[RMDB]
RNA sequence: GGGAACGACUCGAGUAGAGUCGAAAACGUCUCCGUGUGGUAGGACAGGUUCAGACGGCGCGAGUCCUUUGUGUUUGUGUCUGUCUCGUUGAAUCUCGGUGCCAAAACAAAGGGUGGUCCGAUGUGGCGAUAAGAAAUCUUUCGAGAUUUUUUAUCGAAAAGAAACAACAACAACAAC
Reactivity to 2A3 in 0.01 (KOAc 150mM, MgCl2 10mM, bicine 150mM(pH8.5), 24C), signal-to-noise 9, nucleotides 027 to 126: c060g080u020c020u030c040c030g090u140g040u080g080g100u070a070g020g070a060c030a050g010g000u020u020c010a000g010a030c010g010g010c010g000c010g030a020g070u110c010c000u080u080u110g110u020g020u010u030u020g050u010g020u010c030u040g020u000c020u020c060g050u030u090g050a050a040u020c010u000c030g010g020u050g020c010c000a030a050a040a050c050a030a070a020g050g010g010u030g020g030u000c000c010g000a060u060g030u050g070g010
Reactivity to DMS in 0.01 (KOAc 150mM, MgCl2 10mM, bicine 150mM(pH8.5), 24C), signal-to-noise 9, nucleotides 027 to 126: c120g000u010c010u000c010c040g020u010g010u010g000g020u010a060g000g000a070c100a030g000g010u010u000c030a060g010a040c040g000g000c060g010c030g010a080g000u010c010c040u020u020u010g010u020g010u010u000u010g010u010g010u000c010u010g010u010c020u010c130g020u010u010g010a040a070u010c040u000c040g010g020u010g000c020c030a050a040a110a100c160a070a080a110g010g000g020u000g010g010u010c020c020g000a090u020g000u020g010g010
The record gives the reactivity of an RNA of 177 nucleotides to 2A3 and DMS. Conditions: 150 mM KOAc, 10 mM MgCl2 and 150 mM bicine (pH 8.5), 24 C. The DMS profile rests on 57,565 reads. For DMS the reverse transcriptase was MarathonRT.